Record summary
Structure probing data (DMS and 2A3) for a 177-nucleotide construct. The RNA was probed in 150 mM KOAc, 10 mM MgCl2 and 150 mM bicine (pH 8.5) at 24 C.
[RMDB]
RNA sequence: GGGAACGACUCGAGUAGAGUCGAAAAUCGAGGGAGAUCUCGACGCGGACGGCCUCGAGCCGGAUACCGAGUGAUCGGUGUCCGAGUCUCGUCGGUACGGAGCGAACGCUUAUCAGCGUCUUUCUCCGACGGAAGAAAUCUUCGGAUUUCUUCCGUCAAAAGAAACAACAACAACAAC
Reactivity to DMS in 0.01 (KOAc 150mM, MgCl2 10mM, bicine 150mM(pH8.5), 24C), signal-to-noise 2, nucleotides 027 to 126: u000c000g010a040g000g000g000a130g020a080u010c000u000c050g030a060c060g040c010g010g000a230c060g020g000c020c010u010c000g000a010g010c010c010g020g010a000u000a010c000c000g000a020g000u010g010a210u000c000g020g010u000g020u010c010c000g010a080g000u020c000u000c000g010u010c260g000g020u010a040c030g000g010a300g020c050g010a090a040c040g010c000u000u000a150u000c200a080g010c000g030u000c100u010u000u000c020u000c030c300
Reactivity to 2A3 in 0.01 (KOAc 150mM, MgCl2 10mM, bicine 150mM(pH8.5), 24C), signal-to-noise 1, nucleotides 027 to 126: u050c020g010a040g000g000g000a270g080a130u030c020u010c020g010a010c000g050c000g050g020a040c020g000g000c000c010u020c000g000a000g040c000c010g000g000a010u010a010c020c010g010a010g030u180g010a120u030c010g000g000u000g010u020c000c000g000a000g030u040c000u000c010g020u040c040g000g010u050a180c010g000g000a000g020c000g020a080a020c050g010c000u110u230a200u300c140a010g000c000g020u000c060u000u040u000c020u020c030c040

Reactivities are given for positions 27 through 126.